An RNA of 177 nucleotides, treated with 2A3 and DMS and read out base by base.
Values cover nucleotides 27 to 126.
DMS adducts were read by reverse transcription with MarathonRT.
[RMDB]
RNA sequence: GGGAACGACUCGAGUAGAGUCGAAAAAGAACAAUUUGCUGAGGGCUAUUGAGGCGCAACAGCAUCUGUUGCAACUCACAGUCUGGGGCAUCAAGCAGCUCCAGGCAAGAGUCCUGGCUGUGGAAAGCUACCCUCACUAGUUCGCUAGUGAGGGUAGAAAAGAAACAACAACAACAAC
Reactivity to 2A3 in 0.01 (KOAc 150mM, MgCl2 10mM, bicine 150mM(pH8.5), 24C), signal-to-noise 5, nucleotides 027 to 126: a010g140a070a030c090a080a110u180u160u180g030c020u210g110a060g020g000g020c000u020a080u120u130g000a000g020g010c020g010c010a000a000c010a000g090c070a130u120c100u030g010u020u000g000c000a030a040c000u000c000a030c010a030g000u000c000u000g010g000g010g010c050a000u100c060a080a030g130c080a020g000c020u010c000c000a000g010g040c010a020a030g080a000g090u010c000c000u000g010g000c020u030g010u080g060g040a100a010a020g010
Reactivity to DMS in 0.01 (KOAc 150mM, MgCl2 10mM, bicine 150mM(pH8.5), 24C), signal-to-noise 3, nucleotides 027 to 126: a070g030a180a190c140a090a040u020u000u000g030c030u000g010a080g000g000g010c000u020a110u010u010g000a020g000g000c300g030c000a000a000c000a030g030c170a150u030c110u020g020u000u010g000c000a040a240c020u000c000a150c300a150g020u010c000u000g000g020g000g000c000a050u030c160a040a160g010c180a080g020c000u000c000c030a000g000g000c000a070a050g000a090g000u000c000c000u000g000g000c000u010g040u000g000g010a120a070a090g000
It was measured as part of the RMDB libraries RFM100 and RFMREP.
DMS (dimethyl sulfate) methylates the pairing face of unpaired adenines and cytosines.